[RMDB]
RNA sequence: GGGAACGACUCGAGUAGAGUCGAAAAAUGUCGAAAACGAAUACGGUCAUUGGCAAUUUCUCAAAAAUCGUUCAUUUGGUUUAGAUGGUUACGAAUACUUUGAACGUAAAGACCUUUUAGAUAAAAUUCCAUUAUCUACACAAUAUCAAAAUCACAAGGUAGUUAAGCAGUUCGCUGCUUAACUACCAAAAGAAACAACAACAACAAC
Reactivity to 2A3 in 0.01 (KOAc 150mM, MgCl2 10mM, bicine 150mM(pH8.5), 24C), signal-to-noise 1, nucleotides 027 to 156: a000u000g030u020c040g010a010a000a030a070c090g040a110a050u170a100c030g060g020u030c010a020u130u000g000g000c010a020a060u020u020u000c060u060c010a030a030a030a070a130u070c000g000u000u000c000a060u020u000u150g030g020u070u080u030a110g040a180u070g020g030u180u110a030c000g030a030a040u140a230c030u070u000u030g000a030a010c000g040u010a060a150a030g040a070c000c000u090u060u060u030a000g000a000u000a030a030a140a200u130u080c000c000a000u020u010a000u000c060u040a030c000a030c000a130a110u180a100u240c020a000a000a000a270u270c080a030c010a190a000
Structure probing data (2A3) for a 207-nucleotide construct. For 2A3, 448 sequencing reads were counted.